An RNA of 207 nucleotides, treated with 2A3 and read out base by base. 2A3 adducts were read by reverse transcription with SuperScript II with manganese. Values are in units of 0.01, from 0 to 300, in steps of 10.
[RMDB]
RNA sequence: GGGAACGACUCGAGUAGAGUCGAAAAGAUAAGCUAGCAGCAAAAAGGAACCGAUUCCCACCAAGUUCGGAAAGAGAUACCGGGCGAGGCGCUGAAGCAAGAAUCUCGCUUCAGACACCCCAAGGACAUGACCUUAAAAUGUUCGCAUUUUAAGGAACCAUUGGUGAUGCUUCGGCAUCACCAAUGGAAAAGAAACAACAACAACAAC
Reactivity to 2A3 in 0.01 (KOAc 150mM, MgCl2 10mM, bicine 150mM(pH8.5), 24C), signal-to-noise 1, nucleotides 027 to 156: g000a060u120a130a020g000c020u070a000g090c110a020g020c020a070a030a030a030a030g060g010a050a070c040c040g070a160u040u070c000c020c020a010c000c080a080a000g010u000u010c010g050g120a080a270a020g250a000g050a000u080a060c000c000g000g000g000c030g000a040g020g040c120g000c040u000g000a010a000g000c030a070a040g000a280a300u140c170u050c220g000c000u010u000c000a010g030a040c050a120c010c000c020c010a040a050g070g010a030c050a150u190g080a030c020c000u000u000a010a010a010a010u000g030u050u200c080g000c220a020u000u000u020u000a000a010g000g000a000a050